[RMDB]
RNA sequence: GGGAACGACUCGAGUAGAGUCGAAAAGGCGCAACGGCCGCGCCCCGUACACCGGGUCGAAUCCGCGCUGCGCCAACCAGCGCUUGGCCGGCAGCGAGACCUGCAGCUGCAGCCGCCGCUGCGCCAGCAGGUUGCAAGGCUUCGGCCUUGCAACCUGAAAAGAAACAACAACAACAAC
Reactivity to DMS in 0.01 (KOAc 150mM, MgCl2 10mM, bicine 150mM(pH8.5), 24C), signal-to-noise 2, nucleotides 027 to 126: g000g020c010g010c000a050a110c040g010g060c100c260g000c020g040c110c000c000c010g110u000a110c220a080c300c030g000g000g000u000c030g030a110a200u040c040c050g000c090g000c020u000g000c020g000c000c000a070a090c210c060a090g000c230g000c060u000u020g000g000c070c020g000g030c080a030g000c000g000a210g000a080c210c060u000g000c090a270g000c200u050g010c000a110g000c080c050g000c080c050g010c030u020g030c100g010c020c000a150g000
Reactivity to 2A3 in 0.01 (KOAc 150mM, MgCl2 10mM, bicine 150mM(pH8.5), 24C), signal-to-noise 2, nucleotides 027 to 126: g000g020c000g000c000a060a150c040g010g010c050c000g020c000g030c000c010c010c000g040u140a100c080a080c180c020g020g000g020u040c040g050a050a080u060c030c040g000c000g010c020u020g000c020g050c000c000a000a010c010c010a020g030c020g020c050u100u110g010g000c030c040g080g000c050a010g000c010g020a040g070a160c050c030u050g040c060a070g070c030u170g000c010a000g010c010c020g000c000c000g000c010u010g030c020g010c000c020a020g000